[RMDB]
RNA sequence: GGGAACGACUCGAGUAGAGUCGAAAAAAAAGAUAUGGAUCGCACUACCCACCCUUAGAUAUCCGUUGAAACCGUUUCGGAAACGAAACGGUGGAGGAUGCUAAGGAGGUGCGAUCCUAAGUCAAAAGAUCGAUAAAUUGUUCGCAAUUUAUCGAUCAAAAGAAACAACAACAACAAC
Reactivity to DMS in 0.01 (KOAc 150mM, MgCl2 10mM, bicine 150mM(pH8.5), 24C), signal-to-noise 3, nucleotides 027 to 126: a050a080a120a160g000a030u000a020u030g000g010a000u000c010g010c000a020c000u000a090c090c090c150a300c050c000c010u000u000a020g000a050u000a010u000c000c000g010u010u010g000a130a180a040c010c010g010u000u000u000c000g000g000a020a010a030c000g020a010a010a000c010g000g000u000g000g000a010g030g000a020u000g010c000u000a010a010g000g010a060g000g000u010g000c010g010a000u000c000c000u000a000a020g000u020c020a080a110a130a160
Reactivity to 2A3 in 0.01 (KOAc 150mM, MgCl2 10mM, bicine 150mM(pH8.5), 24C), signal-to-noise 2, nucleotides 027 to 126: a000a020a020a040g020a020u020a010u020g000g000a000u000c000g010c020a020c020u090a110c040c090c070a040c030c020c020u040u020a050g060a190u160a180u130c020c080g110u240u020g000a000a010a010c010c000g010u010u000u000c000g000g010a000a000a010c000g000a000a000a000c010g000g000u000g000g000a000g000g000a000u000g000c010u000a000a000g000g010a000g000g010u010g000c000g000a000u000c000c000u010a010a000g010u000c010a030a080a050a120
Conditions: 150 mM KOAc, 10 mM MgCl2 and 150 mM bicine (pH 8.5), 24 C. An RNA of 177 nucleotides, treated with DMS and 2A3 and read out base by base. For DMS, 3,432 sequencing reads were counted. It was measured as part of the RMDB library TTRDES. 2A3 adducts were read by reverse transcription with SuperScript II with manganese.